[RMDB]
RNA sequence: GGGAACGACUCGAGUAGAGUCGAAAAGAUAUGGAUCCGAUGCUUUCGAUAAGCUGCACUCGGAAACGAGUGGCAGCUUUUGACGAAAGGGCAGGAUCCUAAGUCAAAAGUCCACUUCGGUGGACAACUAUCGUGUCAUGUUCGCAUGACACGAUAGAAAAGAAACAACAACAACAAC
Reactivity to DMS in 0.01 (KOAc 150mM, MgCl2 10mM, bicine 150mM(pH8.5), 24C), signal-to-noise 3, nucleotides 027 to 126: g000a020u000a300u010g010g000a010u000c000c010g000a220u050g010c000u000u000u000c010g020a150u020a020a020g020c000u000g010c010a060c010u000c000g000g000a090a080a250c000g010a010g000u000g010g030c020a000g000c010u000u000u000u000g040a300c130g000a000a010a020g010g000g020c150a300g000g000a010u000c010c000u020a020a040g030u000c020a070a140a110a110g000u000c000c000a010c010u000u010c150g000g060u010g010g000a000c010a050a030
Reactivity to 2A3 in 0.01 (KOAc 150mM, MgCl2 10mM, bicine 150mM(pH8.5), 24C), signal-to-noise 2, nucleotides 027 to 126: g020a030u060a040u170g020g000a020u000c010c020g060a080u120g140c060u020u000u030c010g060a080u000a200a010g020c020u000g000c000a010c010u010c010g060g070a090a070a030c000g010a000g020u080g240g000c010a020g000c010u010u010u000u020g050a020c000g070a020a000a020g090g110g060c080a030g000g000a000u000c000c010u010a010a000g010u000c000a080a060a040a130g000u000c010c010a020c010u080u100c300g120g000u010g000g010a010c000a000a000

The data come from the RNA Mapping Database (RMDB), library TTRDES.
The record gives the reactivity of an RNA of 177 nucleotides to DMS and 2A3.
In probing experiments dimethyl sulfate is read out at A N1 and C N3, which are open when not base-paired.
For 2A3 the reverse transcriptase was SuperScript II with manganese.
Reactivities are rounded to 0.1 and cut off at 0 and 3.
Reactivities are given for positions 27 through 126.
Conditions: 150 mM KOAc, 10 mM MgCl2 and 150 mM bicine (pH 8.5), 24 C.